[RMDB]
RNA sequence: GGGAACGACUCGAGUAGAGUCGAAAACUCGUAGUCACAGCCGCUGGGGAACCUAGGCAGAAGGCUGGACGGAGUCUUAGUCCACUCCAAAGGACCUUGGGUUUCUAACCCCCAAGAGGUCGGCACCUGAUGUCGGUGUCCUGACGAAGAUCCAUGAGAAACUUGUUAUCUUCGGAUAACAAGUUUCAAAAGAAACAACAACAACAAC
Reactivity to 2A3 in 0.01 (KOAc 150mM, MgCl2 10mM, bicine 150mM(pH8.5), 24C), signal-to-noise 2, nucleotides 027 to 156: c020u030c020g160u160a040g020u040c020a020c000a150g010c000c010g040c070u030g010g000g020g080a060a110c000c040u050a120g110g110c060a060g080a150a030g010g010c010u020g000g010a010c010g000g010a020g000u000c010u000u110a060g010u050c020c030a050c090u070c060c060a050a090a100g050g000a040c000c030u020u030g000g030g000u090u160u050c100u100a080a070c020c000c000c000c000a000a000g050a020g060g000u000c000g040g030c010a000c010c020u130g090a210u180g260u280c080g000g010u010g020u000c000c030u060g010a000c010g000a050a010g040a030u000c010c020a050u060g040a050
Reactivity to DMS in 0.01 (KOAc 150mM, MgCl2 10mM, bicine 150mM(pH8.5), 24C), signal-to-noise 1, nucleotides 027 to 156: c030u000c000g040u010a150g020u000c030a080c050a080g010c030c030g040c050u000g050g030g030g020a150a150c100c060u000a110g010g070c040a190g010a100a060g000g000c050u010g030g020a120c080g000g030a090g000u020c150u000u010a090g000u000c050c030a110c030u030c010c020a100a190a120g010g000a100c000c050u010u000g000g010g010u000u000u020c030u030a080a070c080c060c000c030c020a110a080g020a130g040g020u000c030g030g030c040a050c000c030u000g000a240u010g020u020c180g000g000u010g030u000c030c050u000g030a100c010g030a110a080g020a070u000c040c000a180u000g020a300
Chemical mapping of a 207-nucleotide RNA with 2A3 and DMS. The RNA was probed in 150 mM KOAc, 10 mM MgCl2 and 150 mM bicine (pH 8.5) at 24 C. For DMS, 1,890 sequencing reads were counted.